Chemical mapping of a 207-nucleotide RNA with 2A3. Values cover nucleotides 27 to 156. Reactivities are rounded to 0.1 and cut off at 0 and 3.

RNA sequence: GGGAACGACUCGAGUAGAGUCGAAAAACUGAUACCUUACGAGGUAUCAGAAUGACUUCGUGGUAGAGCGCCACGAACGGAAAAUAAAGAAAGCUCGAUUGAAACGCACCGUGUACGCACGGUGUGAAAAAGUCGAUCCAGUUCGCUGGAUCGACAACUUCCCAAAGAACUUCGGUUCUUUGGGAAGAAAAGAAACAACAACAACAAC
Reactivity to 2A3 in 0.01 (KOAc 150mM, MgCl2 10mM, bicine 150mM(pH8.5), 24C), signal-to-noise 2, nucleotides 027 to 156: a000c000u000g000a000u000a000c000c000u100u050a090c250g090a000g020g000u000a000u000c000a000g000a020a030u150g030a030c030u000u000c000g000u000g030g010u040a180g050a000g000c000g000c000c000a000c000g020a000a010c000g090g050a060a050a020a000u040a010a010a010g200a000a020a000g000c020u000c010g090a130u090u250g100a110a040a010c000g000c000a000c020c050g030u050g040u020a030c240g000c140a000c000g000g020u000g010u000g000a000a000a000a020a000g000u000c010g000a010u010c000c000a000g030u110u090c190g110c130u000g000g000a000u000c000g000a000c000a000a000